Structure probing data (DMS and 2A3) for a 177-nucleotide construct. The 2A3 profile rests on 5,945 reads. For 2A3 the reverse transcriptase was SuperScript II with manganese. Values cover nucleotides 27 to 126. For DMS, 5,848 sequencing reads were counted.

RNA sequence: GGGAACGACUCGAGUAGAGUCGAAAACCCAGGUGGGCUGCGGGUGGGGAGUGGCCACCCAACGGUGACUCAGAGCACUCCAGCAUCCUGACUCUUGCUCCGUAUUACAUCCCAUGAACCUGGUGGCAGUGAUAGGACAAUUCGUUGUCCUAUCACUAAAAGAAACAACAACAACAAC
Reactivity to DMS in 0.01 (KOAc 150mM, MgCl2 10mM, bicine 150mM(pH8.5), 24C), signal-to-noise 5, nucleotides 027 to 126: c010c000c000a120g010g030u000g010g020g010c050u000g030c190g010g000g020u000g000g000g010g010a100g020u000g020g020c020c010a030c020c020c080a070a090c180g010g020u000g010a050c050u000c100a120g010a230g000c030a060c040u000c020c030a050g010c070a120u000c030c010u000g010a110c040u000c040u000u000g010c030u000c040c030g000u010a060u010u010a090c160a110u000c010c020c020a120u010g020a070a100c080c040u000g020g010u010g000g000c160
Reactivity to 2A3 in 0.01 (KOAc 150mM, MgCl2 10mM, bicine 150mM(pH8.5), 24C), signal-to-noise 3, nucleotides 027 to 126: c000c000c000a010g030g070u090g010g060g020c020u030g030c070g010g010g030u050g010g020g020g010a050g030u030g010g000c000c000a020c020c010c000a050a030c040g020g030u040g060a050c010u000c140a030g010a060g140c010a020c030u020c020c000a020g010c010a060u060c010c010u070g030a110c020u000c020u050u050g020c010u010c020c000g020u050a100u040u130a050c020a060u020c020c010c020a020u110g070a050a050c010c020u050g040g010u040g100g000c050